[RMDB]
RNA sequence: GGGAACGACUCGAGUAGAGUCGAAAAGCCGCCGAUAACGGACUACAGAUCGCAGGUGAUAACGUUGAUUUUAAGCCGCCAAAUCACGGCGAAACUUAUCUCAAAUUCUCCUACGUAGAAGCGGAUUCCAGAUCUGUUAGCCUUUCCAGGGAGUGCCAAGCGUAUUCUAUUUCGAUAGAAUACGCUUAAAAGAAACAACAACAACAAC
Reactivity to 2A3 in 0.01 (KOAc 150mM, MgCl2 10mM, bicine 150mM(pH8.5), 24C), signal-to-noise 4, nucleotides 027 to 156: g060c020c010g000c030c040g080a040u060a150a040c080g000g040a030c020u030a020c000a020g010a010u060c000g020c200a110g000g070u080g060a050u080a100a050c110g020u030u080g030a130u030u060u080u110a050a030g050c100c000g030c030c010a160a140a090u220c060a070c130g010g010c000g000a100a010a010c020u030u030a030u030c030u000c050a060a090a120u100u000c020u010c010c030u080a100c040g140u210a040g030a180a020g030c040g010g060a030u160u000c030c010a010g020a030u010c000u000g000u050u070a020g000c010c000u040u070u040c040c010a060g020g010g000a050g030u070g040c060c010
Reactivity to DMS in 0.01 (KOAc 150mM, MgCl2 10mM, bicine 150mM(pH8.5), 24C), signal-to-noise 3, nucleotides 027 to 156: g030c000c000g030c030c040g030a160u000a040a120c080g030g010a070c010u010a090c020a040g010a040u000c000g010c070a140g000g000u010g010a100u000a070a070c050g020u010u020g030a110u010u000u000u000a060a250g030c000c010g000c020c010a090a120a150u000c180a050c060g010g030c010g010a040a040a050c120u010u000a030u010c010u000c030a030a080a300u000u000c030u000c000c100u000a080c070g030u010a070g010a060a060g010c020g020g030a260u000u000c040c050a240g000a040u000c000u000g000u010u000a040g020c010c020u010u000u000c050c040a150g000g010g000a110g030u010g010c030c090